[RMDB]
RNA sequence: GGGAACGACUCGAGUAGAGUCGAAAACUUAUUCGGUCAAUUAUUUAUUGAUAGAGCAGCAAGCGUGGCGUGCAAUGUUUGCUUCAAGUGCUAUCCCUGCCUUGUUAUUGACCCUGGGGAUUUUGUAUGAUUACCUAGUGUUCGCACUAGGUAAUCAAAAAGAAACAACAACAACAAC
Reactivity to DMS in 0.01 (KOAc 150mM, MgCl2 10mM, bicine 150mM(pH8.5), 24C), signal-to-noise 3, nucleotides 027 to 126: c110u010u000a070u000u000c060g000g030u000c010a030a050u000u000a130u000u010u020a110u020u000g000a060u000a080g010a080g020c140a070g010c050a020a120g010c040g010u010g010g010c070g030u000g010c040a090a080u010g020u010u000u000g020c020u000u010c070a040a050g010u010g020c040u000a110u000c030c020c040u000g000c030c030u000u010g000u000u000a110u010u000g010a090c020c030c060u000g010g000g010g010a170u000u000u020u000g010u010a110
Reactivity to 2A3 in 0.01 (KOAc 150mM, MgCl2 10mM, bicine 150mM(pH8.5), 24C), signal-to-noise 1, nucleotides 027 to 126: c010u070u110a100u300u150c040g040g000u020c010a040a010u000u100a070u270u270u170a150u060u070g040a040u070a070g060a020g070c100a000g020c010a070a010g020c000g070u030g140g000c120g040u050g020c040a010a070u120g040u060u070u050g050c000u030u030c030a060a040g000u010g130c010u040a040u090c000c000c000u000g020c030c040u050u080g070u000u030a090u050u040g040a070c000c000c000u040g050g050g000g000a030u120u050u000u300g060u050a040